[RMDB]
Record summary
The record gives the reactivity of an RNA of 177 nucleotides to 2A3 and DMS. The RNA was probed in 150 mM KOAc, 10 mM MgCl2 and 150 mM bicine (pH 8.5) at 24 C. For 2A3, 1,307 sequencing reads were counted. It was measured as part of the RMDB libraries RFM100 and RFMREP.

RNA sequence: GGGAACGACUCGAGUAGAGUCGAAAACCAUUUGCUGGCAGACAAUCCAGUCUCAUUACAAGGCAAACGUGAUGGGGCUGUUUUCUGCGCUUAACCCCGUCUUCCAAUAAUUGGAAAAAUGCAGUGCUUGCAUUGACAGGUUCGCCUGUCAAUGCAAAAAAGAAACAACAACAACAAC
Reactivity to 2A3 in 0.01 (KOAc 150mM, MgCl2 10mM, bicine 150mM(pH8.5), 24C), signal-to-noise 3, nucleotides 027 to 126: c010c000a030u100u100u050g030c020u090g090g000c000a000g010a060c060a030a020u050c050c000a050g010u000c000u000c000a010u010u000a020c060a110a150g270g030c000a080a110a000c100g010u010g010a000u000g000g000g000g010c000u000g040u000u020u010u000c010u000g000c030g030c030u060u090a100a090c000c000c020c050g090u020c100u020u010c000c000a030a120u190a280a240u190u040g010g040a000a070a000a000a000u100g040c060a020g020u040g150c030
Reactivity to DMS in 0.01 (KOAc 150mM, MgCl2 10mM, bicine 150mM(pH8.5), 24C), signal-to-noise 2, nucleotides 027 to 126: c010c050a200u000u030u040g000c010u000g050g010c010a000g000a040c240a020a050u010c270c000a000g060u000c000u000c000a020u000u010a000c000a110a120g000g050c220a090a050a060c210g020u000g000a000u000g000g050g060g010c000u000g000u000u000u000u000c050u020g010c010g030c040u000u040a160a180c040c000c060c010g030u020c050u020u020c000c000a070a190u110a050a080u020u000g010g000a000a030a020a010a050u020g010c060a030g000u040g000c110